[RMDB]
An RNA of 177 nucleotides, treated with 2A3 and DMS and read out base by base. For 2A3 the reverse transcriptase was SuperScript II with manganese. The reactions ran in a buffer of 150 mM KOAc, 10 mM MgCl2 and 150 mM bicine (pH 8.5), at 24 C. It was measured as part of the RMDB library OK1LIB.
RNA sequence: GGGAACGACUCGAGUAGAGUCGAAAAGAAUAUAAGAGCGCAGUAAAUGUGAGAGCAAACUGCGCCCGGACUGUAGGAUCCGGUGGCACAGCAACGCUCAAUCACAAAACGCUGUGCCACAUGAAGACGUCAUAGUCGUGUUCGCACGACUAUGACGAAAAGAAACAACAACAACAAC
Reactivity to 2A3 in 0.01 (KOAc 150mM, MgCl2 10mM, bicine 150mM(pH8.5), 24C), signal-to-noise 3, nucleotides 027 to 126: g030a020a040u180a020u010a030a010g030a060g030c000g040c010a000g030u060a060a070a000u040g010u060g030a100g010a000g020c010a080a200a000c010u000g000c000g000c000c000c000g000g000a010c040u090g110u300a080g050g150a070u020c000c000g020g000u000g000g000c000a000c000a000g000c000a020a110c080g040c040u060c020a040a130u160c020a020c050a060a210a070a010c110g000c000u000g020u010g000c000c000a010c000a060u240g030a040a050g110a010
Reactivity to DMS in 0.01 (KOAc 150mM, MgCl2 10mM, bicine 150mM(pH8.5), 24C), signal-to-noise 2, nucleotides 027 to 126: g000a090a030u010a090u040a100a070g000a180g000c060g000c060a000g030u020a050a160a130u030g000u000g000a190g030a200g000c000a050a050a020c030u000g000c000g000c020c040c000g000g000a010c130u040g080u040a160g080g000a240u020c010c080g000g030u000g010g020c000a000c000a030g000c000a300a020c080g020c020u020c030a170a050u060c150a150c190a080a080a090a180c300g000c000u000g000u020g040c000c000a000c020a110u000g040a260a120g000a130

For DMS, 1,061 sequencing reads were counted.
DMS adducts were read by reverse transcription with MarathonRT.